[RMDB]
RNA sequence: GGGAACGACUCGAGUAGAGUCGAAAAGCGCGACUGGCCGGGCAACGUGCGUGAGCUGCGCAACGCGGCCGACCGCUUCGUGCUCGGCGUGACGGAGGGCAUCGUCGGCGACGCGGGCCCGGAGACACUCAAAAUGCCCGUUCGCGGGCAUUUUGAGAAAAGAAACAACAACAACAAC
Reactivity to DMS in 0.01 (KOAc 150mM, MgCl2 10mM, bicine 150mM(pH8.5), 24C), signal-to-noise 2, nucleotides 027 to 126: g020c050g010c040g000a120c120u010g000g010c020c020g060g010g000c030a060a030c020g040u010g010c000g030u000g010a200g010c050u010g010c010g020c270a120a100c200g010c030g010g000c020c030g000a140c290c020g000c030u000u000c020g000u000g020c000u000c010g040g030c000g030u020g020a050c020g010g000a130g020g000g010c080a050u000c020g010u020c010g010g000c090g000a090c050g010c020g010g000g020c010c040c010g020g000a170g020a070c190a070